Chemical mapping of a 177-nucleotide RNA with 2A3. The data come from the RNA Mapping Database (RMDB), library OK1LIB. The RNA was probed in 150 mM KOAc, 10 mM MgCl2 and 150 mM bicine (pH 8.5) at 24 C. 2A3 adducts were read by reverse transcription with SuperScript II with manganese.
[RMDB]
RNA sequence: GGGAACGACUCGAGUAGAGUCGAAAACGGAAGACAGUGAGUGGACGGAAUAAAUCCCCUUCCCACCUCCCCACUGUCCACUCACUGUCUUCCGGAAAGGAAAUAUAAAUCGGGGGUGGGAAGGGGAGCGACCACUAAUAUUCGUAUUAGUGGUCGCAAAAGAAACAACAACAACAAC
Reactivity to 2A3 in 0.01 (KOAc 150mM, MgCl2 10mM, bicine 150mM(pH8.5), 24C), signal-to-noise 2, nucleotides 027 to 126: c000g010g010a000a000g020a000c050a010g000u010g000a000g000u000g010g000a000c040g020g050a000a080u100a130a070a070u060c000c010c010c000u000u000c000c000c000a010c000c000u010c060c030c040c020a090c080u080g000u000c010c000a010c020u020c010a000c000u000g000u000c000u000u000c000c000g000g040a000a010a000g120g020a030a060a000u300a020u130a080a150a040u280c070g000g000g020g000g030u000g000g000g000a000a000g020g000g000g000a000